[RMDB]
RNA sequence: GGGAACGACUCGAGUAGAGUCGAAAAGACGCCACGAGUGCGCGUCAGGAAGGAACUCCGGAUUCUUCCAGUACUCGAAUAAGAACUCGGAAUGCGACAUAGAGUUCACGUAUUCCAACCGGAGAAAGGGAACGUAGUUCUUCGGAACUACGUUCCCAAAAGAAACAACAACAACAAC
Reactivity to 2A3 in 0.01 (KOAc 150mM, MgCl2 10mM, bicine 150mM(pH8.5), 24C), signal-to-noise 2, nucleotides 027 to 126: g000a000c000g040c000c100a270c090g040a000g010u100g030c040g030c070g020u030c110a020g000g000a000a000g000g030a130a090c000u000c000c000g000g000a130u010u000c010u000u000c000c000a030g020u040a030c010u000c000g080a060a060u210a140a090g240a130a040c070u030c090g000g000a000a000u050g030c000g040a010c050a100u220a110g050a000g140u070u140c100a000c000g000u000a000u010u000c000c000a000a030c000c000g000g000a000g000a020a000a010